Chemical mapping of a 177-nucleotide RNA with 2A3 and DMS. Values are in units of 0.01, from 0 to 300, in steps of 10. The RNA was probed in 150 mM KOAc, 10 mM MgCl2 and 150 mM bicine (pH 8.5) at 24 C. For 2A3, 1,405 sequencing reads were counted. The DMS profile rests on 975 reads.
RNA sequence: GGGAACGACUCGAGUAGAGUCGAAAAUACGCGAGGUUCGCCUCGCGUAAAAGAGGAGCGUAAACGUGAGCGUACGUAGUGCUGAACAUCGUUCCUACACGAAUGCACAUGGUUUCGACCAUGUGAAACCUCUGGUUGGUUUCGACCAACCAGAGGUAAAAGAAACAACAACAACAAC
Reactivity to 2A3 in 0.01 (KOAc 150mM, MgCl2 10mM, bicine 150mM(pH8.5), 24C), signal-to-noise 2, nucleotides 027 to 126: u030a000c000g000c000g000a000g050g010u080u070c140g040c050c020u030c010g050c000g010u000a000a000a000a000g070a000g000g040a050g000c040g070u190a120a110a080c050g080u080g070a100g130c050g020u070a000c050g080u070a090g100u050g140c010u020g030a050a010c020a120u060c020g000u000u000c030c010u070a010c050a010c140g190a100a070u180g030c000a000c010a000u020g000g050u000u100u060c130g060a000c000c000a000u010g010u000g000a020a020
Reactivity to DMS in 0.01 (KOAc 150mM, MgCl2 10mM, bicine 150mM(pH8.5), 24C), signal-to-noise 1, nucleotides 027 to 126: u000a000c000g000c010g000a010g010g020u000u000c270g000c010c000u000c000g000c020g020u000a000a020a060a080g000a120g000g040a030g000c020g000u010a010a140a100c050g020u010g000a170g020c170g040u000a010c060g000u000a090g040u000g000c000u000g000a140a140c110a060u000c000g000u000u000c000c000u000a080c170a050c160g000a080a150u000g010c000a060c000a010u000g000g010u000u000u000c180g010a000c020c000a000u010g000u010g020a010a080